[RMDB]
RNA sequence: GGGAACGACUCGAGUAGAGUCGAAAACUCGCACGGUACGUCAUGGCGGCCAGGGCCUAUGGGGUGCGUACGGUGGUCCGUGCCACGGGCGACAACCCGCUCGUCUCUGCGGUGGCGGCCUCGGCGGCCGGAGAGACCACUUCGGUGGUCUCUCCGGAAAAGAAACAACAACAACAAC
Reactivity to 2A3 in 0.01 (KOAc 150mM, MgCl2 10mM, bicine 150mM(pH8.5), 24C), signal-to-noise 1, nucleotides 027 to 126: c010u010c020g000c020a070c010g090g030u300a170c000g030u030c050a070u070g120g130c040g060g020c010c040a060g000g100g000c030c010u170a260u300g080g020g000g000u060g000c040g020u040a080c050g040g150u110g180g030u010c040c060g060u070g020c000c000a010c020g000g020g040c020g040a130c020a000a110c000c020c000g000c020u010c000g170u050c040u000c040u090g040c050g070g000u060g030g010c060g060g010c000c000u010c050g030g000c020g000g000
Reactivity to DMS in 0.01 (KOAc 150mM, MgCl2 10mM, bicine 150mM(pH8.5), 24C), signal-to-noise 1, nucleotides 027 to 126: c040u010c080g000c160a180c150g000g000u010a050c030g060u020c040a100u000g020g020c030g000g020c080c030a070g010g010g000c030c060u010a130u020g020g000g000g040u000g010c020g010u010a060c010g000g000u010g010g000u000c030c070g000u000g000c020c020a060c010g000g010g020c010g000a110c090a070a090c130c050c010g000c040u000c070g010u000c050u010c110u010g000c040g010g030u000g010g030c000g000g010c020c010u000c100g000g000c030g000g000